[RMDB]
This 177-nucleotide RNA was probed chemically with DMS. Reactivities are given for positions 27 through 126. Source: RMDB library TTRINS, as collected in RNAgym.
RNA sequence: GGGAACGACUCGAGUAGAGUCGAAAAGAUAUGGAGAAGGUGAUACGUACAAGUUCUUUUGACGAGACCAUGUCGGAAACGACAUCCCUCUCGAUAAGAACUGUACGUAUCACCUUCUCCUAAGUCAUCCGGUACUAAGGUUCGCCUUAGUACCGGAAAAAGAAACAACAACAACAAC
Reactivity to DMS in 0.01 (KOAc 150mM, MgCl2 10mM, bicine 150mM(pH8.5), 24C), signal-to-noise 1, nucleotides 027 to 126: g020a050u000a300u020g030g000a030g010a000a020g000g000u000g000a000u000a010c000g000u000a000c020a050a080g050u000u000c000u010u000u010u000g030a160c160g020a040g000a010c140c300a010u000g000u010c000g000g000a090a150a200c000g000a000c000a020u010c130c090c110u000c000u010c000g040a200u000a000a010g010a000a000c000u000g010u000a020c010g010u000a000u000c010a010c010c000u000u000c010u000c000c000u010a020a080g000u020c060a090